This 177-nucleotide RNA was probed chemically with 2A3 and DMS. DMS adducts were read by reverse transcription with MarathonRT. Values are in units of 0.01, from 0 to 300, in steps of 10. The RNA was probed in 150 mM KOAc, 10 mM MgCl2 and 150 mM bicine (pH 8.5) at 24 C. The 2A3 profile rests on 38,570 reads. For 2A3 the reverse transcriptase was SuperScript II with manganese. Source: RMDB library OK1LIB, as collected in RNAgym.

[RMDB]
RNA sequence: GGGAACGACUCGAGUAGAGUCGAAAAGGUGGCUCUGAGAGUGCAACUCCACAUGCAGUGUCAGAGUCACCGAUUUAGCAUGUUCGUCCUACUAUGCAGGUGCAUACCUUGUAGGACGUUCAUGCGAGGGUUCCAUUACCUUCGGGUAGUGGAACCCAAAAGAAACAACAACAACAAC
Reactivity to 2A3 in 0.01 (KOAc 150mM, MgCl2 10mM, bicine 150mM(pH8.5), 24C), signal-to-noise 9, nucleotides 027 to 126: g000g000u000g000g000c000u000c000u000g010a020g020a040g140u010g000c000a030a070c040u080c090c010a080c020a070u030g000c000a030g130u030g150u130c000a000g000a000g000u000c000a000c000c000g000a000u000u000u020a010g000c000a000u000g000u000u000c000g000u000c010c000u000a010c010u040a040u160g100c080a060g130g160u190g130c050a070u120a220c020c050u050u080g010u000a000g010g000a000c000g000u000u000c000a000u000g000c000g000a100
Reactivity to DMS in 0.01 (KOAc 150mM, MgCl2 10mM, bicine 150mM(pH8.5), 24C), signal-to-noise 5, nucleotides 027 to 126: g000g020u000g000g000c020u000c000u000g000a020g010a050g000u000g010c000a020a070c160u050c150c130a060c160a180u000g000c000a010g010u000g000u000c000a000g000a020g030u010c000a000c010c000g000a030u030u020u020a150g000c000a010u000g000u000u000c000g010u000c000c000u000a010c000u010a070u010g030c150a140g010g020u020g000c160a070u030a020c140c090u000u020g000u000a000g000g000a000c010g010u000u000c000a000u010g000c000g000a120